The data come from the RNA Mapping Database (RMDB), library OK2TRN. An RNA of 177 nucleotides, treated with 2A3 and DMS and read out base by base. Values cover nucleotides 27 to 126. The 2A3 profile rests on 5,668 reads. Values are in units of 0.01, from 0 to 300, in steps of 10. DMS adducts were read by reverse transcription with MarathonRT.
[RMDB]
RNA sequence: GGGAACGACUCGAGUAGAGUCGAAAACGUACUAGGCCGAUGAUCUAGCGCGGCCGUAGUGAUCGGCCUGUGAUCAGUGGCCCUAUGCUAGUACAGGCCGAUCAUGGUACUCACGAUCGGCGCGUGAUGAUAUAGGAGCGUUCGCGCUCCUAUAUCAAAAAGAAACAACAACAACAAC
Reactivity to 2A3 in 0.01 (KOAc 150mM, MgCl2 10mM, bicine 150mM(pH8.5), 24C), signal-to-noise 4, nucleotides 027 to 126: c040g040u040a030c010u060a050g030g030c010c030g150a150u110g020a080u070c070u150a060g090c050g020c050g130g000c010c000g000u000a020g010u010g020a040u030c000g010g000c030c010u000g010u020g030a150u080c030a000g050u050g070g060c000c000c010u140a140u220g040c020u030a010g050u030a020c000a010g000g000c010c000g000a010u000c000a000u030g010g010u050a080c020u040c050a040c010g040a090u090c010g020g010c040g000c000g020u030g040a090
Reactivity to DMS in 0.01 (KOAc 150mM, MgCl2 10mM, bicine 150mM(pH8.5), 24C), signal-to-noise 5, nucleotides 027 to 126: c140g010u000a030c030u010a050g010g020c000c040g000a080u010g010a070u000c060u000a120g000c070g010c060g000g010c010c010g020u000a050g030u000g000a040u000c010g010g000c010c000u010g000u000g000a060u000c050a060g010u010g010g020c040c100c090u010a060u010g010c070u000a060g000u000a030c020a060g000g010c010c000g000a010u000c000a010u000g010g000u010a060c120u000c040a050c070g000a080u000c040g010g010c030g000c070g000u000g000a170